[RMDB]
RNA sequence: GGGAACGACUCGAGUAGAGUCGAAAAAAUAAAAGGACGGGGAUUGUAUAUGUGUUCCUAUUCAAACAAUGCAAUUCCUAAAUGGUAGAAGAUGUUGCGAAGCCAGUACCGCCUGGCGAUGAAAUGGCGGUAACAAAUAGUUCGCUAUUUGUUACCGAAAAGAAACAACAACAACAAC
Reactivity to 2A3 in 0.01 (KOAc 150mM, MgCl2 10mM, bicine 150mM(pH8.5), 24C), signal-to-noise 1, nucleotides 027 to 126: a000a050u110a000a020a000a020g130g020a030c120g000g000g000g030a000u000u030g000u030a040u000a080u120g040u000g060u090u060c010c020u050a070u050u170c060a030a120a120c000a010a030u030g010c000a010a010u010u060c010c000u010a050a030a000u190g070g020u060a080g020a050a000g050a140u180g010u130u080g060c060g020a080a000g000c000c000a000g030u070a200c000c010g020c010c030u030g000g040c030g000a050u050g060a040a050a000u100g090g030
Reactivity to DMS in 0.01 (KOAc 150mM, MgCl2 10mM, bicine 150mM(pH8.5), 24C), signal-to-noise 3, nucleotides 027 to 126: a090a060u000a030a030a080a130g010g010a090c210g010g010g000g000a010u000u000g010u000a010u010a060u000g020u000g030u000u010c060c050u000a120u010u010c160a060a060a080c030a010a050u000g010c010a010a020u000u000c000c010u000a060a070a050u000g010g010u000a060g010a070a090g000a060u000g000u000u000g000c030g000a120a190g000c010c010a020g000u000a110c120c060g020c300c000u000g010g000c030g010a060u020g000a030a080a110u000g010g010